[RMDB]
RNA sequence: GGGAACGACUCGAGUAGAGUCGAAAAUUUGAACACUCUUUUGGCGGUCAUUUAUCGCAAUAGAAACGUGUGGAUGCAGGCGGCCUGACCUCCUCAGGGUUCGUACACCCCGACACAAACGGCUCGGAGAGUCGAUUCCAUUCGUGGAAUCGACUCUAAAAGAAACAACAACAACAAC
Reactivity to 2A3 in 0.01 (KOAc 150mM, MgCl2 10mM, bicine 150mM(pH8.5), 24C), signal-to-noise 3, nucleotides 027 to 126: u070u020u130g100a100a000c040a010c020u060c020u030u160u030u100g110g000c020g030g000u020c040a140u090u080u160a160u100c010g030c060a070a020u080a060g150a040a120a030c150g060u070g010u040g060g000a040u040g040c050a060g070g020c040g000g050c010c000u060g040a100c020c000u010c000c000u030c040a070g060g000g000u060u100c020g000u020a020c000a040c070c000c000c000g030a010c020a010c000a040a120a060c010g000g030c010u020c080g050g010
Reactivity to DMS in 0.01 (KOAc 150mM, MgCl2 10mM, bicine 150mM(pH8.5), 24C), signal-to-noise 2, nucleotides 027 to 126: u030u000u030g000a040a030c060a120c070u020c010u000u000u000u010g000g010c060g050g000u000c300a070u040u000u010a100u000c000g000c050a030a080u040a100g000a040a110a090c300g000u000g000u030g010g000a100u030g030c090a100g070g000c010g040g000c110c020u020g000a130c070c060u030c040c040u000c080a020g000g000g000u000u000c080g010u000a170c190a080c000c010c000c010g000a000c100a100c080a140a000a100c090g000g000c020u000c000g000g000
Record summary: Structure probing data (2A3 and DMS) for a 177-nucleotide construct. For DMS the reverse transcriptase was MarathonRT. For 2A3 the reverse transcriptase was SuperScript II with manganese. The data come from the RNA Mapping Database (RMDB), library OK1LIB. The reactions ran in a buffer of 150 mM KOAc, 10 mM MgCl2 and 150 mM bicine (pH 8.5), at 24 C.